[RMDB]
RNA sequence: GGGAACGACUCGAGUAGAGUCGAAAAGGCUUAAAUCAUGGAUGGCGCUGGUUGGCACAGAUCUUAAACAUGGAGCCCUUGUCAGAUGUGACAGCCACCCUCCUCUUUGACUUCCUGGAGGUGUGUGUCCAAUUGAUAAGUUCGCUUAUCAAUUGGAAAAAGAAACAACAACAACAAC
Reactivity to DMS in 0.01 (KOAc 150mM, MgCl2 10mM, bicine 150mM(pH8.5), 24C), signal-to-noise 9, nucleotides 027 to 126: g010g010c090u000u000a060a090a080u010c070a040u000g000g010a060u000g010g010c130g020c100u000g020g010u010u000g010g010c050a060c050a060g000a090u000c050u000u010a080a090a090c090a060u000g010g010a110g010c090c040c040u000u000g010u000c060a070g000a100u000g010u000g000a030c040a050g010c060c010a050c030c010c000u000c010c010u000c060u000u000u000g010a090c130u000u000c030c020u000g010g010a040g000g010u010g010u000g010u010g010
Reactivity to 2A3 in 0.01 (KOAc 150mM, MgCl2 10mM, bicine 150mM(pH8.5), 24C), signal-to-noise 7, nucleotides 027 to 126: g030g000c020u070u120a040a080a050u160c050a050u110g030g030a050u080g060g000c050g000c100u040g040g020u060u060g040g000c030a020c010a060g090a110u040c020u070u160a110a120a020c020a060u070g080g050a050g050c020c030c000u030u020g020u020c020a010g010a200u070g060u040g080a020c010a020g020c000c000a010c010c000c010u000c020c000u050c020u070u110u100g090a130c000u050u020c030c020u030g030g000a020g030g020u090g030u010g010u010g040

An RNA of 177 nucleotides, treated with DMS and 2A3 and read out base by base. For 2A3, 12,197 sequencing reads were counted. 2A3 adducts were read by reverse transcription with SuperScript II with manganese. Reactivities are given for positions 27 through 126. The reactions ran in a buffer of 150 mM KOAc, 10 mM MgCl2 and 150 mM bicine (pH 8.5), at 24 C.